[RMDB]
RNA sequence: GGGAACGACUCGAGUAGAGUCGAAAAGUAGGUGGUUGAAGGGAAUGGGAAGAACAUUUUAGGCAGAGAUGAAUCUGUGAAAUAGCCUGAGCUAAGAGGAAAACUGUUGUUCAGAGAACUGCAGGUAGUUCACCAGGGUUUGAGAAUGAAGUGUAUGAUAUCUUAGGUAUUUCGAUACCUAAGAUAUAAAAGAAACAACAACAACAAC
Reactivity to 2A3 in 0.01 (KOAc 150mM, MgCl2 10mM, bicine 150mM(pH8.5), 24C), signal-to-noise 4, nucleotides 027 to 156: g110u120a040g000g070u030g040g000u070u080g070a080a050g020g020g010a050a090u130g040g030g020a050a040g030a050a050c060a090u130u130u050u090a080g040g000c030a000g020a000g000a070u120g040a070a030u010c030u050g030u030g080a060a100a050u080a040g020c010c020u000g010a010g020c030u060a070a010g010a060g070g030a020a100a010a010c010u020g030u070u010g000u020u040c040a040g040a010g020a230a020c020u070g000c010a020g030g000u030a030g040u020u050c010a010c060c020a010g030g010g000u030u120u110g040a050g020a020a050u100g010a050a060g010u020g020u080a060u090g110
Reactivity to DMS in 0.01 (KOAc 150mM, MgCl2 10mM, bicine 150mM(pH8.5), 24C), signal-to-noise 3, nucleotides 027 to 156: g030u000a060g020g020u010g000g030u010u000g010a090a120g000g040g020a070a090u010g020g000g020a080a070g000a070a100c070a080u020u000u000u010a090g030g010c000a080g010a130g010a130u010g010a080a070u000c020u010g000u000g000a030a050a110u010a090g020c020c020u000g010a110g020c040u010a080a090g000a130g010g000a080a060a040a080c040u000g010u000u000g010u000u010c040a220g010a210g010a040a040c030u000g000c080a090g010g020u000a060g020u010u000c030a070c030c020a090g000g010g010u000u000u000g020a110g010a090a080u000g010a030a090g020u000g010u000a100u000g000